[RMDB]
RNA sequence: GGGAACGACUCGAGUAGAGUCGAAAACUGCCGGGGCACUGCGUACAUGAAGCUAGCUUCUGGCAUGGUUUGAUGCCACGCAGUAUCCAUAAUGGCACAGUGGGGAACUGAGGGGAUAACCGCCUGGCACUCAGGAGUCGUUCGCGACUCCUGAGUGAAAAGAAACAACAACAACAAC
Reactivity to DMS in 0.01 (KOAc 150mM, MgCl2 10mM, bicine 150mM(pH8.5), 24C), signal-to-noise 2, nucleotides 027 to 126: c090u020g040c030c010g000g000g000g030c120a000c020u000g030c000g000u000a200c090a120u100g000a000a000g010c010u090a080g000c000u000u080c180u070g020g020c020a020u000g010g000u050u000u050g000a030u010g000c230c080a070c010g000c010a090g000u000a000u000c020c000a170u040a060a070u070g000g010c080a050c110a070g000u000g000g000g020g000a210a090c150u000g020a180g000g000g020g000a090u000a130a110c060c080g000c070c030u000g020g000
Reactivity to 2A3 in 0.01 (KOAc 150mM, MgCl2 10mM, bicine 150mM(pH8.5), 24C), signal-to-noise 2, nucleotides 027 to 126: c020u000g010c020c020g000g000g000g000c010a000c030u000g010c010g000u030a050c020a040u020g060a000a000g020c040u000a010g030c000u120u060c060u180g040g020c020a050u060g000g040u040u130u080g100a040u020g040c090c080a020c020g000c000a000g000u030a010u000c000c010a050u210a200a110u180g010g000c040a000c000a060g040u020g010g000g000g000a050a000c040u010g030a170g000g010g000g010a040u080a120a050c020c000g000c020c030u010g000g010
An RNA of 177 nucleotides, treated with DMS and 2A3 and read out base by base. DMS adducts were read by reverse transcription with MarathonRT. The DMS profile rests on 1,708 reads. The 2A3 profile rests on 1,265 reads. Source: RMDB library OK1LIB, as collected in RNAgym.